Source information
Chemical mapping of a 207-nucleotide RNA with 2A3 and DMS. It was measured as part of the RMDB library OK3TST. Conditions: 150 mM KOAc, 10 mM MgCl2 and 150 mM bicine (pH 8.5), 24 C.
[RMDB]
RNA sequence: GGGAACGACUCGAGUAGAGUCGAAAACACUCAGCACAGGUUUUGCUAUGAUCCUAAGAGUGGUUCGAUAGUAUCGCUUGGGGCGUAUAGAGUCCAUUCCUGUUCGAGGUAUAUAGUGUUACAUCAAGAUCUUGAGAUCUUCUAUGCUAACCUAAUCGAUUGAGCUAUGUUUCGACAUAGCUCAAUCAAAAGAAACAACAACAACAAC
Reactivity to 2A3 in 0.01 (KOAc 150mM, MgCl2 10mM, bicine 150mM(pH8.5), 24C), signal-to-noise 6, nucleotides 027 to 156: c020a010c010u030c020a040g050c070a050c030a060g020g040u030u060u180u140g070c050u070a060u170g030a070u050c000c020u080a120a050g030a020g080u060g010g020u020u010c010g030a020u030a060g060u080a070u120c010g010c030u030u040g050g010g060g000c030g020u060a070u070a090g050a000g040u010c020c010a030u010u030c000c010u030g070u050u070c060g030a050g040g120u040a080u010a050u020a130g090u110g000u190u010a010c000a020u040c050a020a010g000a030u030c040u220u300g130a300g010a090u010c020u060u030c050u080a030u040g030c040u040a010a010c000c020u060a110a070u240c090
Reactivity to DMS in 0.01 (KOAc 150mM, MgCl2 10mM, bicine 150mM(pH8.5), 24C), signal-to-noise 2, nucleotides 027 to 156: c030a030c050u000c010a230g020c070a190c140a020g010g030u000u000u000u000g020c100u020a090u000g030a080u000c000c000u000a080a170g020a090g040u000g040g000u010u000c020g010a060u000a060g020u000a100u000c040g010c020u000u020g010g010g000g040c040g060u020a080u010a090g000a090g010u000c040c040a170u000u000c000c020u010g000u000u000c030g010a130g010g000u030a130u010a140u000a060g020u010g030u000u010a040c020a080u000c290a030a020g020a030u000c010u020u000g010a200g010a030u000c010u010u010c090u000a050u000g010c120u000a010a040c020c020u010a040a190u000c090
Background: The 2A3 profile rests on 3,858 reads.